[RMDB]
Chemical mapping of a 177-nucleotide RNA with DMS and 2A3. DMS adducts were read by reverse transcription with MarathonRT. Conditions: 150 mM KOAc, 10 mM MgCl2 and 150 mM bicine (pH 8.5), 24 C. For 2A3, 11,174 sequencing reads were counted. It was measured as part of the RMDB library OK2TST.

RNA sequence: GGGAACGACUCGAGUAGAGUCGAAAAGAUCGGUCGAUCGGCCCGCCGUGUCGGACCGGCGGUCGACUGUGAACCGGUCAGUUGCGUCGUCGUGACGGACAGAGCAGCGAUACUCUGAGAGAACGGCUCAUUAUUUCAUCUUCGGAUGAAAUAAUGAAAAAGAAACAACAACAACAAC
Reactivity to DMS in 0.01 (KOAc 150mM, MgCl2 10mM, bicine 150mM(pH8.5), 24C), signal-to-noise 9, nucleotides 027 to 126: g010a020u000c000g020g010u000c020g000a060u000c010g010g000c070c030c100g040c010c040g020u010g020u000c170g010g010a110c190c010g000g000c020g010g010u000c010g010a020c050u000g010u010g020a090a050c020c010g010g000u010c000a090g010u000u000g000c110g010u000c060g010u000c050g010u000g010a140c140g000g000a160c030a030g000a070g010c030a040g010c180g010a170u000a050c010u000c010u010g000a240g000a110g000a140a050c030g000g010c050
Reactivity to 2A3 in 0.01 (KOAc 150mM, MgCl2 10mM, bicine 150mM(pH8.5), 24C), signal-to-noise 5, nucleotides 027 to 126: g000a010u000c000g000g030u020c030g020a100u000c000g010g030c040c090c010g000c010c010g080u110g070u150c120g060g100a160c030c000g000g010c010g000g010u010c000g000a020c050u070g090u080g090a040a030c000c000g000g010u010c000a010g050u050u080g060c050g060u070c000g010u020c010g050u090g070a080c030g020g000a020c020a030g040a000g000c060a010g040c010g040a010u060a100c020u010c030u050g050a060g000a010g010a140a020c020g050g000c020

Values are in units of 0.01, from 0 to 300, in steps of 10.